[RMDB]
RNA sequence: GGGAACGACUCGAGUAGAGUCGAAAAGGGGUCGAUCGCAAGAGGCUAGUAGAGCUUGGAUUUAUGGAGCUGAAGCCUCCACGGCUCCAUUGUCAGCUCUACGGCCUUGAUGACCGAUCGACGGAGGCACCCAAACCAACUCGUUCGCGAGUUGGAACUGAUACAUCGCGUUCGCGCGAUGUAUCAGAAAAGAAACAACAACAACAAC
Reactivity to 2A3 in 0.01 (KOAc 150mM, MgCl2 10mM, bicine 150mM(pH8.5), 24C), signal-to-noise 2, nucleotides 027 to 156: g090g000g020g000u000c010g010a010u000c010g030c060a150a300g020a010g010g000c020u130a140g030u000a000g000a000g010c070u250u300g210g000a100u160u260u070a010u090g000g000a000g000c000u010g020a080a000g030c010c000u000c010c000a040c000g000g000c000u000c020c000a000u000u010g000u040c080a020g000c010u000c000u000a000c000g000g000c000c000u000u000g040a050u000g010a010c000c000g000a010u000c000g000a000c000g000g000a000g000g000c010a050c010c020c000a030a030a090c000c000a010a000c000u000c000g050u090u070c300g020c010g110a010g000u000u000g000g010a020a030